[RMDB]
RNA sequence: GGGAACGACUCGAGUAGAGUCGAAAAAAGUGGGGUAUUCUUUGAGAUUUGGAGUUAGAUUAGGGUGGUUUUGUAAAAUAUUUAUUAUUUUAUGCUCCUUUGUAAGUUCACCGCCCUGAACUACUUCCUUCUUAUGUCCAUUCGUGGACAUAAGAAGAAAAGAAACAACAACAACAAC
Reactivity to 2A3 in 0.01 (KOAc 150mM, MgCl2 10mM, bicine 150mM(pH8.5), 24C), signal-to-noise 2, nucleotides 027 to 126: a000a000g130u090g000g040g030g010u110a140u070u030c040u020u070u100g150a200g070a180u170u100u200g040g000a010g010u020u090a020g050a040u040u030a000g030g020g010u000g000g030u030u080u210u000g000u020a000a030a030a030u020a000u030u190u050a170u290u090a010u000u070u070u070a050u190g030c000u070c010c000u180u090u160g080u150a040a040g000u060u150c090a000c000c000g000c020c000c000u000g000a000a010c000u000a000c000u000u010c010
An RNA of 177 nucleotides, treated with 2A3 and read out base by base. For 2A3 the reverse transcriptase was SuperScript II with manganese.